[RMDB]
RNA sequence: GGGAACGACUCGAGUAGAGUCGAAAAGGAGGAAGGAUGUCGAACCCGAGAGGGCCUGAGGAAUCGCUUUUUAGAGUUUGACUAACAGAUUGUGUUAGUGUUUAGAGCCAGCCUAAACAACUCUUCAGAAACCUCAGGCGACAGUGAGGCUGGCUAACGAACAACUAUAAUUCGUUAUAGUUGUUCGAAAAGAAACAACAACAACAAC
Reactivity to 2A3 in 0.01 (KOAc 150mM, MgCl2 10mM, bicine 150mM(pH8.5), 24C), signal-to-noise 3, nucleotides 027 to 156: g020g020a030g020g020a050a050g050g010a040u100g030u110c030g020a010a060c040c030c010g030a040g010a010g030g040g000c000c000u000g000a000g000g040a030a040u040c050g070c110u220u120u060u090u110a000g000a010g010u030u120u190g120a040c000u010a000a020c020a130g190a300u230u190g090u030g010u110u000a010g020u000g030u040u020u030a030g000a000g000c010c010a000g000c000c000u020a040a020a000c000a010a000c010u030c000u090u080c040a050g030a020a020a020c000c000u000c000a000g000g000c000g000a000c000a000g050u050g100a040g030g000c000u000g000g000c000u000a040a010
Reactivity to DMS in 0.01 (KOAc 150mM, MgCl2 10mM, bicine 150mM(pH8.5), 24C), signal-to-noise 2, nucleotides 027 to 156: g020g010a060g010g020a050a030g020g030a080u020g040u010c060g000a050a190c030c000c010g010a180g010a210g030g000g050c000c030u000g010a060g010g020a040a250u010c030g000c180u000u000u030u010u010a050g010a050g020u000u000u000g030a110c010u010a010a010c010a100g010a210u000u010g010u010g010u000u000a020g030u020g030u000u000u010a040g000a120g000c020c000a000g000c000c000u010a050a060a050c010a030a050c000u000c010u000u000c150a130g000a020a110a220c030c000u000c010a010g010g020c040g040a040c060a070g050u030g010a150g030g020c000u000g040g020c000u000a000a060